This 207-nucleotide RNA was probed chemically with 2A3 and DMS. The 2A3 profile rests on 3,538 reads. Reactivities are given for positions 27 through 156.

[RMDB]
RNA sequence: GGGAACGACUCGAGUAGAGUCGAAAAAGUUAGGUUCGCUAUGGUGCAACUCUUUAAGGCAAUAACGAACUAAUUCUAAGCAAGUAAUGGAGAAAUGCCAGGGUCAUUAUCUAGCCAUAAUAGUGCUGUAAGUGACUUAGAUUCGUCUAAGUCACAACAGAAGCAAGUGAUUCGUCACUUGCUUCUGAAAAGAAACAACAACAACAAC
Reactivity to 2A3 in 0.01 (KOAc 150mM, MgCl2 10mM, bicine 150mM(pH8.5), 24C), signal-to-noise 6, nucleotides 027 to 156: a010g080u070u050a050g030g070u020u010c010g010c020u020a020u070g130g050u090g050c070a120a180c080u110c080u200u270u200a120a040g040g000c020a040a040u050a090a040c030g000a000a000c000u010a000a020u060u050c060u140a070a030g030c030a060a000g050u130a060a040u080g040g010a040g020a040a080a020u070g010c060c050a070g030g050g020u030c000a020u000u060a030u150c040u040a040g050c010c010a030u040a140a030u060a120g130u080g030c030u030g050u100a190a070g000u010g000a000c000u000u000a000g000a020u020u040c120g010u010c120u000a000a000g000u000c010a000c000a000a000
Reactivity to DMS in 0.01 (KOAc 150mM, MgCl2 10mM, bicine 150mM(pH8.5), 24C), signal-to-noise 2, nucleotides 027 to 156: a050g010u010u000a100g000g000u010u000c000g010c020u000a040u000g000g050u000g000c030a070a070c110u000c110u020u010u010a110a090g020g000c020a080a020u000a020a040c030g010a010a040c020u000a030a090u000u010c050u010a130a150g040c030a060a110g010u000a040a110u000g020g010a100g030a060a080a080u010g000c050c040a110g010g010g030u000c040a050u000u040a080u000c050u000a130g030c030c030a060u000a040a090u000a110g010u010g020c000u020g020u000a070a090g000u010g000a010c010u000u000a010g000a080u000u010c300g030u000c000u000a010a010g010u000c000a000c010a050a200